This 177-nucleotide RNA was probed chemically with DMS and 2A3.
RNA sequence: GGGAACGACUCGAGUAGAGUCGAAAACUAUAACGCUGUCAAGAAAACCCCAAAACCGUAAAAUGAGAGCAAUUCGCCUGGUUCCUCUUUAAAGUCAAACCAGGAGGCUCCGCCGGACUAGAGGUCGCUCUUGGCACAAUUUCGAUUGUGCCAAGAGAAAAGAAACAACAACAACAAC
Reactivity to DMS in 0.01 (KOAc 150mM, MgCl2 10mM, bicine 150mM(pH8.5), 24C), signal-to-noise 1, nucleotides 027 to 126: c040u070a120u000a100a110c210g000c010u000g000u020c050a040a070g000a110a100a160a120c020c000c080c030a010a040a170a070c170c030g070u070a040a030a000a140u020g010a120g000a020g000c010a070a080u000u040c050g010c000c000u000g010g020u000u000c080c190u000c020u000u050u040a060a170a010g010u000c200a080a050a030c030c060a000g000g000a040g000g070c050u000c020c030g000c110c000g000g000a060c030u000a000g000a070g000g000u020c020g000
Reactivity to 2A3 in 0.01 (KOAc 150mM, MgCl2 10mM, bicine 150mM(pH8.5), 24C), signal-to-noise 3, nucleotides 027 to 126: c000u000a030u080a230a030c090g000c060u040g000u050c010a030a040g080a070a140a080a150c010c010c020c000a020a080a070a090c030c000g090u110a010a010a060a130u220g030a080g000a010g140c050a030a070u110u080c020g050c030c010u000g000g000u030u020c050c020u010c060u100u110u240a160a160a030g070u070c120a020a000a010c010c000a010g000g020a010g020g000c020u010c000c010g030c000c000g030g000a030c020u010a020g020a040g110g020u030c050g000
The data come from the RNA Mapping Database (RMDB), library RFM100.
The DMS profile rests on 1,180 reads.
Conditions: 150 mM KOAc, 10 mM MgCl2 and 150 mM bicine (pH 8.5), 24 C.